[RMDB]
RNA sequence: GGGAACGACUCGAGUAGAGUCGAAAAUCUCAGGGUAAAUUCCAGACAGACUCUUUAACACCAGAACAUAAGGCUGGACGAGAUUCAGGUCCAAGUAGUUUGUUUGGGAGGCGACCCAGGAAGAGGAGUGGGGAAGUGAGACAGGAAAGGGAAGGCAGAUUUACGACGAUUUCGAUCGUCGUAAAUCAAAAGAAACAACAACAACAAC
Reactivity to 2A3 in 0.01 (KOAc 150mM, MgCl2 10mM, bicine 150mM(pH8.5), 24C), signal-to-noise 1, nucleotides 027 to 156: u020c050u010c040a010g090g000g000u110a040a060a070u010u010c000c000a010g000a000c000a000g040a010c000u000c040u200u080u260a140a040c130a070c020c050a000g060a230a080c050a120u210a260a080g080g000c030u010g070g000a040c040g130a090g030a090u090u260c140a040g090g080u020c000c000a030a030g000u010a000g000u200u000u000g000u000u040u010g000g000g000a010g050g040c020g000a000c000c020c040a010g070g030a020a010g000a000g030g020a100g000u060g060g000g010g010a000a110g020u070g060a020g020a020c020a010g140g000a090a060a080g100g010g000a000a000g080g020c150a000
The record gives the reactivity of an RNA of 207 nucleotides to 2A3. As a SHAPE reagent, 2A3 marks flexible, mostly unpaired nucleotides at the ribose 2'-OH. For 2A3 the reverse transcriptase was SuperScript II with manganese.